[RMDB]
RNA sequence: GGGAACGACUCGAGUAGAGUCGAAAAGCGCCGCGGCCGCGCGGCCUCGAUCUCAGUACUGGAUCAUCGUACCGAGGCCUGCGAGCGCAGCAUCUGGAUCGCGUACCGGCCACUGCGCUCGGCCACGCGAAGCACGGACUUUCGAGUCCGUGCUUCGAAAAGAAACAACAACAACAAC
Reactivity to 2A3 in 0.01 (KOAc 150mM, MgCl2 10mM, bicine 150mM(pH8.5), 24C), signal-to-noise 1, nucleotides 027 to 126: g070c100g000c020c030g040c040g000g000c080c050g050c010g000c050g130g000c020c000u050c020g100a140u080c140u030c170a060g030u040a040c090u230g190g050a220u170c070a090u180c090g000u000a010c030c010g010a010g000g010c000c040u090g080c050g010a010g000c020g000c000a000g010c000a110u080c130u110g110g040a160u080c080g020c080g100u100a060c040c030g010g000c000c010a050c020u010g000c010g000c000u000c060g020g000c010c000a050c020g090
Reactivity to DMS in 0.01 (KOAc 150mM, MgCl2 10mM, bicine 150mM(pH8.5), 24C), signal-to-noise 1, nucleotides 027 to 126: g010c030g000c050c080g020c000g030g030c070c070g000c050g060c130g010g030c020c030u000c030g010a100u000c090u040c140a170g010u000a010c080u030g030g000a120u010c290a090u000c090g000u000a050c010c010g000a040g020g000c010c010u030g010c030g020a120g000c010g040c010a020g020c090a210u000c060u010g020g000a110u000c110g000c090g020u010a140c190c010g000g030c140c020a230c110u020g000c030g010c000u010c080g010g020c010c060a040c040g000
Record summary
This 177-nucleotide RNA was probed chemically with 2A3 and DMS.